[RMDB]
RNA sequence: GGGAACGACUCGAGUAGAGUCGAAAAUUCGAGUAUUAGGCGCUGGCUAUUCUCCUGGGCACUUAUGGGAGACCUCAUAACGCGACACACUGCAGAAUGUCAGGUCGCCUCUAGGCUGCCGGUAGGCCAAAUUGAUCCUAUUCGUAGGAUCAAUUUGAAAAGAAACAACAACAACAAC
Reactivity to DMS in 0.01 (KOAc 150mM, MgCl2 10mM, bicine 150mM(pH8.5), 24C), signal-to-noise 9, nucleotides 027 to 126: u010u000c050g010a110g010u000a090u000u000a080g010g020c050g020c050u000g000g010c030u010a090u000u010c030u000c030c050u000g010g010g010c030a050c060u000u000a020u000g000g010g000a130g000a050c090c010u000c030a030u000a050a150c170g010c020g010a100c160a130c150a120c170u010g010c070a030g010a190a030u000g000u000c110a020g010g010u000c030g000c010c010u000c160u000a040g000g000c160u000g010c020c010g010g010u000a070g000g000c080
Reactivity to 2A3 in 0.01 (KOAc 150mM, MgCl2 10mM, bicine 150mM(pH8.5), 24C), signal-to-noise 6, nucleotides 027 to 126: u070u030c030g020a020g060u100a110u150u130a070g050g000c040g010c090u030g050g000c030u060a080u110u020c030u010c010c020u030g000g040g000c020a020c050u050u030a020u070g020g010g000a070g040a040c000c000u030c000a030u030a070a030c050g030c020g100a020c080a030c020a010c230u080g000c010a020g030a200a020u040g040u090c030a020g000g020u040c010g020c010c000u000c010u030a040g010g010c040u020g010c020c010g050g060u100a070g040g000c020
This 177-nucleotide RNA was probed chemically with DMS and 2A3. Values are in units of 0.01, from 0 to 300, in steps of 10. The 2A3 profile rests on 17,778 reads. Source: RMDB library OK2TRN, as collected in RNAgym. The RNA was probed in 150 mM KOAc, 10 mM MgCl2 and 150 mM bicine (pH 8.5) at 24 C.